[RMDB]
RNA sequence: GGGAACGACUCGAGUAGAGUCGAAAAGGGCGAUUAAUUUUGUCAAUUGCCCGAUCGAAAUAGUCAUUAAUCGCAUUUCCAGCCGCAGUUGCGAAUAUCGUUGCCGCAACAGCACCGGUUACAUGAGCAGUUGUCACUGCGAACCCUCCGGCGACGAAGUUACACGUAAGUUCGCUUACGUGUAACUAAAAGAAACAACAACAACAAC
Reactivity to DMS in 0.01 (KOAc 150mM, MgCl2 10mM, bicine 150mM(pH8.5), 24C), signal-to-noise 2, nucleotides 027 to 156: g010g000g030c000g020a030u000u000a020a030u000u000u010u000g020u010c060a060a030u010u000g010c000c000c020g030a070u010c040g020a030a100a100u010a080g020u000c060a090u010u000a050a070u000c060g000c040a170u000u000u010c010c020a190g010c040c010g010c020a240g000u000u000g000c010g010a090a100u000a090u000c060g010u000u000g030c010c000g000c050a050a100c040a130g000c050a080c080c040g030g020u000u000a070c120a120u010g000a180g010c050a100g010u000u000g020u000c090a150c050u000g000c030g000a060a110c040c030c010u000c040c000g000g030c030g010a070c030g010a090
Reactivity to 2A3 in 0.01 (KOAc 150mM, MgCl2 10mM, bicine 150mM(pH8.5), 24C), signal-to-noise 6, nucleotides 027 to 156: g070g010g000c000g040a010u010u060a070a110u090u150u250u300g120u110c070a040a060u060u070g040c020c020c020g010a040u090c020g040a070a050a060u130a060g070u080c050a030u080u120a060a050u040c040g000c050a040u000u050u050c030c030a040g030c040c020g020c040a040g010u020u000g000c020g060a050a050u060a050u190c030g020u010u030g010c010c000g030c030a050a050c000a040g040c030a060c040c040g010g010u080u110a100c080a180u180g090a050g030c010a010g010u120u120g120u250c110a030c020u000g000c010g030a020a020c000c000c000u040c030c000g040g000c000g010a010c020g030a000

Source: RMDB library OK3TST, as collected in RNAgym. The record gives the reactivity of an RNA of 207 nucleotides to DMS and 2A3. The DMS profile rests on 5,421 reads. The reactions ran in a buffer of 150 mM KOAc, 10 mM MgCl2 and 150 mM bicine (pH 8.5), at 24 C. Reactivities are given for positions 27 through 156. 2A3 adducts were read by reverse transcription with SuperScript II with manganese.